[RMDB]
RNA sequence: GGGAACGACUCGAGUAGAGUCGAAAAGGGGUCUGGCGUUGAUCGAUACGCGAGUCGCAAUGAUGUAUACUGAAGCCUCCACGGUAUAUUGAGCGACUCAUCGGGAGCCAGACGGAGGCACCCAAAACGCACAGGUAGAUUCGUCUACCUGUGCGAACCGAAAACAUCGAUUCGUCGAUGUUUUCGGAAAAGAAACAACAACAACAAC
Reactivity to 2A3 in 0.01 (KOAc 150mM, MgCl2 10mM, bicine 150mM(pH8.5), 24C), signal-to-noise 1, nucleotides 027 to 156: g020g020g030g020u000c010u000g000g000c000g180u220u000g000a000u030c010g010a000u100a110c290g060c100g150a000g000u000c020g000c020a050a300u010g000a000u000g000u000a000u000a000c010u020g050a130a010g020c010c010u020c000c000a010c000g000g010u000a000u000a000u000u020g010a000g010c020g000a010c000u000c000a000u010c000g000g000g020a010g000c000c010a000g000a000c000g010g000a000g010g010c000a020c000c010c010a060a040a000a020c020g010c000a000c010a000g040g000u010a000g000a020u070u120c200g100u000c070u000a000c000c000u000g000u000g000c000g000a010a000